[RMDB]
This 177-nucleotide RNA was probed chemically with DMS and 2A3. DMS adducts were read by reverse transcription with MarathonRT. Source: RMDB library RFM100, as collected in RNAgym.
RNA sequence: GGGAACGACUCGAGUAGAGUCGAAAAACGGCGGAUCUACGGAUCCGCCGAAGGAAUGCCGCGGCGGGGACGGCGAUUGGUCCGUAUGUGUGGUGCCACCGGCCGCCGGCUCCGCCCCGGCCCCCAAUCCUUUGCGUUAGUUCGCUAACGCAAAGGAAAAAGAAACAACAACAACAAC
Reactivity to DMS in 0.01 (KOAc 150mM, MgCl2 10mM, bicine 150mM(pH8.5), 24C), signal-to-noise 1, nucleotides 027 to 126: a020c020g020g020c060g000g030a000u030c000u000a150c290g030g040a070u000c070c000g030c000c000g050a010a020g030g010a070a040u040g000c020c010g040c300g000g000c000g010g020g000g000a000c000g000g000c000g000a050u030u010g010g000u000c100c160g010u070a000u000g030u020g030u040g000g000u010g000c020c190a150c120c010g060g000c130c000g040c040c000g000g000c000u000c000c000g000c000c000c010c050g020g020c000c070c000c000c000a140a080
Reactivity to 2A3 in 0.01 (KOAc 150mM, MgCl2 10mM, bicine 150mM(pH8.5), 24C), signal-to-noise 2, nucleotides 027 to 126: a010c000g000g000c000g000g000a000u000c020u030a040c300g080g000a000u000c000c000g000c000c000g000a010a000g040g040a130a160u210g000c020c000g000c010g010g010c020g020g010g000g000a010c020g000g030c000g040a070u110u190g020g020u190c060c000g140u130a150u100g170u050g060u130g080g220u220g090c050c010a010c020c010g000g040c010c000g000c000c010g000g020c010u020c000c020g010c000c000c000c000g000g000c000c000c000c000c000a000a040